Annotation:
The record gives the reactivity of an RNA of 177 nucleotides to DMS and 2A3. DMS adducts were read by reverse transcription with MarathonRT.
[RMDB]
RNA sequence: GGGAACGACUCGAGUAGAGUCGAAAAACCGGCAACUGCCUUGACGAACAACGGAAACGGCAUGCCGGCCGCAACCGACAGCAGUUCGUCGACCGAGGCCGACGGCGCCGAGGACAUCAGCACGGGCCGCACUGAUACGAUUCGUCGUAUCAGUGCGAAAAGAAACAACAACAACAAC
Reactivity to DMS in 0.01 (KOAc 150mM, MgCl2 10mM, bicine 150mM(pH8.5), 24C), signal-to-noise 2, nucleotides 027 to 126: a120c020c020g050g050c060a210a090c080u000g030c060c000u000u040g000a120c000g000a040a070c090a250a210c000g000g030a070a220a240c100g000g050c010a090u090g000c180c060g040g000c030c040g000c100a010a180c000c000g000a140c300a060g000c280a110g040u020u000c000g050u000c020g000a040c070c050g000a190g000g030c020c060g030a070c090g000g040c080g050c020c030g000a140g000g000a060c080a050u000c140a070g010c010a100c070g000g000g000c070
Reactivity to 2A3 in 0.01 (KOAc 150mM, MgCl2 10mM, bicine 150mM(pH8.5), 24C), signal-to-noise 4, nucleotides 027 to 126: a000c010c000g000g000c050a170a080c060u060g020c010c020u020u100g040a020c010g030a120a030c030a140a010c040g050g000a080a050a030c060g020g020c030a020u190g070c030c000g050g000c000c000g010c030a030a050c000c010g080a030c060a100g100c030a010g050u040u020c000g000u010c000g050a040c030c040g030a050g000g070c030c020g030a110c100g050g010c060g000c020c000g020a050g000g010a010c030a140u160c040a010g070c070a020c040g010g010g030c010
The RNA was probed in 150 mM KOAc, 10 mM MgCl2 and 150 mM bicine (pH 8.5) at 24 C. The DMS profile rests on 1,858 reads. For 2A3, 2,838 sequencing reads were counted.